[RMDB]
RNA sequence: GGGAACGACUCGAGUAGAGUCGAAAACGACAAGGGUGUAAAGAUCGCUCUUUUACUCGGCAUGAUACCACCGUUAUCGGGUCAACAGAGUAGUUGCAAAUGACAACAAUGCUCAGGGUUCUGCUCUAAAAGUUCGUACCCUUCGGGGUACGAACAACACUCGUGGAUUGUUCGCAAUCCACGAGUGAAAAGAAACAACAACAACAAC
Reactivity to 2A3 in 0.01 (KOAc 150mM, MgCl2 10mM, bicine 150mM(pH8.5), 24C), signal-to-noise 3, nucleotides 027 to 156: c050g060a020c060a030a050g030g060g000u010g050u200a160a120a030g140a190u160c020g000c020u000c040u020u030u020u040a130c140u060c010g000g030c000a010u110g000a000u030a050c000c020a010c010c020g140u100u060a020u070c020g000g000g030u000c010a000a050c060a030g010a020g000u030a010g030u030u060g060c070a130a200a200u160g070a140c020a090a020c020a040a180u080g030c000u030c060a010g010g050g000u080u010c010u050g020c040u000c020u020a070a100a060a030g000u000u000c010g000u010a010c010c000c000u000u030c180g050g000g000g000u000a000c000g000a000a000c000a000a000
An RNA of 207 nucleotides, treated with 2A3 and read out base by base.